[RMDB]
RNA sequence: GGGAACGACUCGAGUAGAGUCGAAAACAAAUACCGUUCGCGGUAUUUGAAAUACGGAAACCUACGUGCCGUCAGAAGUUAAGAGGUGCUUGCUCUCGUUAAAAAUCAGCUGAUUCGUCAGCUGAAAACUAUGCAAAGGGUUCGCCCUUUGCAUAGUAAAAGAAACAACAACAACAAC
Reactivity to 2A3 in 0.01 (KOAc 150mM, MgCl2 10mM, bicine 150mM(pH8.5), 24C), signal-to-noise 4, nucleotides 027 to 126: c000a000a000a000u000a000c010c000g000u010u040c210g000c010g110g000u000a000u000u000u010g010a000a030a020u200a030c040g030g010a110a050a030c000c020u040a050c080g070u090g040c050c000g040u060c020a060g010a220a030g150u120u190a160a010g040a030g060g040u050g010c060u040u070g020c000u020c000u020c050g070u070u100a080a090a030a010a070u040c010a000g000c000u000g000a030u000u070c110g100u020c060a010g000c000u000g000a000a000a000
Reactivity to DMS in 0.01 (KOAc 150mM, MgCl2 10mM, bicine 150mM(pH8.5), 24C), signal-to-noise 5, nucleotides 027 to 126: c000a000a010a000u000a000c000c000g030u000u010c220g030c000g020g000u000a000u000u000u000g010a090a110a090u000a070c100g010g000a060a070a090c040c020u000a060c080g020u000g010c030c020g000u000c150a090g010a090a080g010u000u000a090a090g000a080g000g010u000g000c070u000u000g010c050u000c030u000c040g010u010u010a030a050a070a080a090u000c000a010g000c010u000g000a020u000u010c170g010u000c000a010g010c000u000g000a010a030a060